Source information
The record gives the reactivity of an RNA of 177 nucleotides to DMS and 2A3. The reactions ran in a buffer of 150 mM KOAc, 10 mM MgCl2 and 150 mM bicine (pH 8.5), at 24 C. DMS (dimethyl sulfate) methylates the pairing face of unpaired adenines and cytosines. For 2A3 the reverse transcriptase was SuperScript II with manganese.
[RMDB]
RNA sequence: GGGAACGACUCGAGUAGAGUCGAAAAUCGCCAUCAUCUCCGUUGAAACAUUGGUAAUUAUUAUUCACUGAGUACAAACUGUCAGCUGUCUGUGCUUCCUGCGUGCACCUAAAGAGAUGUGAAACGCGACUCUCGUGGAGUUCGCUCCACGAGAGUCAAAAGAAACAACAACAACAAC
Reactivity to DMS in 0.01 (KOAc 150mM, MgCl2 10mM, bicine 150mM(pH8.5), 24C), signal-to-noise 1, nucleotides 027 to 126: u000c070g020c020c020a050u000c060a030u000c040u010c000c080g000u000u000g010a160a050a130c090a160u000u000g010g060u000a090a090u000u000a060u030u000a090u000u000c050a040c050u000g000a030g030u010a000c160a070a120a130c090u010g000u020c100a080g040c050u010g010u000c080u000g010u000g010c100u000u000c050c040u000g070c000g050u010g010c050a040c020c130u030a040a140a080g020a070g010a040u010g000u010g000a040a010a160c100g010c100
Reactivity to 2A3 in 0.01 (KOAc 150mM, MgCl2 10mM, bicine 150mM(pH8.5), 24C), signal-to-noise 1, nucleotides 027 to 126: u050c000g000c020c010a020u050c010a030u050c050u000c030c020g100u000u090g020a110a030a100c050a150u000u140g010g010u040a140a040u060u200a120u130u050a090u110u070c030a010c050u030g020a030g060u040a070c030a060a260a070c010u020g060u100c020a020g050c040u060g070u100c000u030g060u030g060c000u030u000c000c010u020g030c030g010u000g010c010a000c000c010u100a060a080a010g060a030g000a050u140g000u020g060a120a050a000c050g000c050